[RMDB]
RNA sequence: GGGAACGACUCGAGUAGAGUCGAAAAACAAUGAUACUUAACAACACGUGUGAUGAUGUAUCUAUUCAUACAAUAACAAUCAUGUCAAAUUAUUCUCAACUUUUGAUAAAUGUUACUUCAGAUACUAUAUCUACAAACCUUCCUUUUCUAAAGAGUGUAUGAGGCAUUUAUUCGUAAAUGCCUCAUAAAAAGAAACAACAACAACAAC
Reactivity to DMS in 0.01 (KOAc 150mM, MgCl2 10mM, bicine 150mM(pH8.5), 24C), signal-to-noise 3, nucleotides 027 to 156: a120c050a070a120u010g000a150u000a090c070u000u000a090a130c060a110a110c040a080c130g010u000g030u010g010a090u010g000a150u010g010u010a000u000c010u000a190u020u010c100a180u000a070c110a030a070u010a030a030c020a050a130u020c060a150u000g020u000c000a040a030a030u000u000a100u000u000c130u000c150a060a110c110u010u010u010u010g010a040u000a030a050a150u000g010u010u000a000c040u010u000c070a110g010a060u000a030c030u000a180u000a080u000c010u010a110c050a040a120a070c040c030u000u000c010c010u010u010u010u000c030u020a030a040a070g010a120g020u000g030
Reactivity to 2A3 in 0.01 (KOAc 150mM, MgCl2 10mM, bicine 150mM(pH8.5), 24C), signal-to-noise 6, nucleotides 027 to 156: a000c070a040a060u120g080a040u120a130c060u190u180a120a020c080a060a030c040a040c140g090u110g030u050g040a030u020g010a020u070g010u000a020u010c020u020a070u040u140c050a030u080a180c030a050a150u060a080a020c030a020a070u090c040a040u100g020u010c000a020a030a030u080u110a100u270u090c090u040c070a060a200c070u010u040u030u030g020a020u020a060a200a050u030g000u030u040a040c030u110u120c090a020g000a030u010a040c020u030a030u020a030u210c010u030a030c030a040a070a050c010c010u040u060c020c020u060u090u060u060c040u090a130a070a030g070a030g020u100g000
An RNA of 207 nucleotides, treated with DMS and 2A3 and read out base by base. 2A3 adducts were read by reverse transcription with SuperScript II with manganese. The DMS profile rests on 4,766 reads. Conditions: 150 mM KOAc, 10 mM MgCl2 and 150 mM bicine (pH 8.5), 24 C. DMS adducts were read by reverse transcription with MarathonRT. Values cover nucleotides 27 to 156. The 2A3 profile rests on 3,244 reads.